Structure probing data (DMS and 2A3) for a 207-nucleotide construct.
2A3 adducts were read by reverse transcription with SuperScript II with manganese.
Conditions: 150 mM KOAc, 10 mM MgCl2 and 150 mM bicine (pH 8.5), 24 C.
The 2A3 profile rests on 676 reads.
RNA sequence: GGGAACGACUCGAGUAGAGUCGAAAAGAGGAAUCAGAGUCAUUGGUAGAAAAAACCACUGAACCAUCUGGACUAGUUGUAGAACCUAUAGAGUUAGAUACAGGACCCACAACACAUAUUAUAGAUGUGAUCCCAGGGCCACAGCUCCACAAUGUAAACGAGCUAUAUCAUUCGUGAUAUAGCUCGUAAAAGAAACAACAACAACAAC
Reactivity to DMS in 0.01 (KOAc 150mM, MgCl2 10mM, bicine 150mM(pH8.5), 24C), signal-to-noise 1, nucleotides 027 to 156: g000a120g030g020a070a210u000c020a090g000a190g000u000c000a050u020u000g000g020u000a140g000a010a100a150a220a070a040c000c000a050c060u010g020a110a160c050c000a060u020c060u060g020g020a130c100u000a170g010u000u000g050u000a100g010a050a060c020c000u000a050u010a060g020a080g030u020u000a060g020a170u000a050c060a100g070g000a040c020c000c020a060c050a130a090c000a070c030a020u000a080u020u000a200u000a190g010a100u000g000u000g000a160u000c080c030c020a120g020g010g000c000c030a060c100a080g000c030u000c020c030a050c100a040a100u020g020u000a060a100
Reactivity to 2A3 in 0.01 (KOAc 150mM, MgCl2 10mM, bicine 150mM(pH8.5), 24C), signal-to-noise 2, nucleotides 027 to 156: g050a000g010g050a100a020u110c020a020g020a020g050u010c000a020u030u050g010g020u050a050g250a160a150a070a000a010a020c040c000a010c050u030g010a020a010c020c030a130u000c020u020g000g000a030c020u030a060g060u020u040g050u040a040g020a110a040c010c020u050a070u120a170g020a030g000u070u060a020g010a100u110a130c060a040g080g040a110c030c030c030a050c050a080a000c020a020c000a000u030a040u190u270a110u220a110g170a090u030g020u000g030a050u100c000c030c020a010g020g000g020c000c060a040c010a020g010c000u010c020c080a050c030a070a030u290g060u300a300a060